[RMDB]
RNA sequence: GGGAACGACUCGAGUAGAGUCGAAAAGAUAUGGACACUCCAGAGCUUGGAUUUAUCGGAAACGAUUGUCAGCUCAUGGAUGUGUCCUAAGUCAAAAGAAUAACUUCGGUUCGCCGAAGUUAUUCAAGUUUAUUCACUUCUUCGGAAGUGAAUAAACAAAAGAAACAACAACAACAAC
Reactivity to DMS in 0.01 (KOAc 150mM, MgCl2 10mM, bicine 150mM(pH8.5), 24C), signal-to-noise 4, nucleotides 027 to 126: g000a060u000a300u000g000g010a010c010a000c000u000c000c000a040g000a010g010c010u000u010g020g010a020u000u010u000a010u000c000g010g010a110a110a160c000g010a010u010u000g030u000c000a020g000c010u010c000a080u000g000g000a020u010g020u000g010u000c000c010u010a010a060g010u010c020a090a080a140a170g000a030a000u010a000a000c000u000u000c000g000g000u000u010c290g020c010c000g010a020a010g010u000u000a000u000u000c000a070a080
Reactivity to 2A3 in 0.01 (KOAc 150mM, MgCl2 10mM, bicine 150mM(pH8.5), 24C), signal-to-noise 4, nucleotides 027 to 126: g000a020u060a030u130g000g000a000c000a010c000u000c010c010a010g000a000g030c070u240u300g140g020a070u300u300u200a030u060c000g030g020a090a050a070c010g010a010u030u010g020u010c010a000g010c030u020c050a100u010g010g000a020u140g000u010g000u010c000c000u000a030a010g040u010c040a040a050a020a150g000a010a000u000a000a000c000u010u000c010g000g070u020u080c280g050c070c000g010a000a000g000u010u000a000u000u000c000a000a000
About this RNA:
Source: RMDB library TTRDEL, as collected in RNAgym. Structure probing data (DMS and 2A3) for a 177-nucleotide construct.